[RMDB]
This 177-nucleotide RNA was probed chemically with 2A3 and DMS.
The RNA was probed in 150 mM KOAc, 10 mM MgCl2 and 150 mM bicine (pH 8.5) at 24 C.
2A3 adducts were read by reverse transcription with SuperScript II with manganese.
The DMS profile rests on 2,048 reads.

RNA sequence: GGGAACGACUCGAGUAGAGUCGAAAAAGGAGAGUUGAUGAAUUUGGCUCGGUCAGUAGAGGAUUUGACAUCCCUAGCUGCAGCCUCCGAGCGCAUGGCUGAGGAACAGGGGAUUGUGUUCAUCGCCCACGGUCUGAACUUUCGAGUUCAGACCGUGAAAAGAAACAACAACAACAAC
Reactivity to 2A3 in 0.01 (KOAc 150mM, MgCl2 10mM, bicine 150mM(pH8.5), 24C), signal-to-noise 2, nucleotides 027 to 126: a000g150g000a130g020a050g030u060u090g030a070u020g040a070a170u100u090u150g040g000c020u010c040g010g000u070c040a000g020u020a020g120a190g050g000a030u100u050u170g060a060c060a030u000c020c020c020u010a080g040c040u060g000c050a050g050c010c020u000c010c020g020a010g000c070g000c030a040u080g010g000c070u090g050a040g090g000a110a000c010a050g000g000g110g050a090u140u100g090u010g020u030u030c020a030u030c060g050c000c010
Reactivity to DMS in 0.01 (KOAc 150mM, MgCl2 10mM, bicine 150mM(pH8.5), 24C), signal-to-noise 2, nucleotides 027 to 126: a010g000g000a080g000a050g050u000u010g020a060u010g020a080a140u000u000u000g000g030c000u000c030g000g030u000c060a040g030u000a030g010a090g030g000a030u010u010u010g010a060c200a160u010c000c000c010u000a130g010c030u000g010c270a080g000c070c030u000c040c040g020a050g020c070g010c110a060u000g010g010c030u020g010a090g000g000a040a070c110a070g000g000g000g000a090u030u020g020u010g010u000u000c060a060u000c060g000c060c040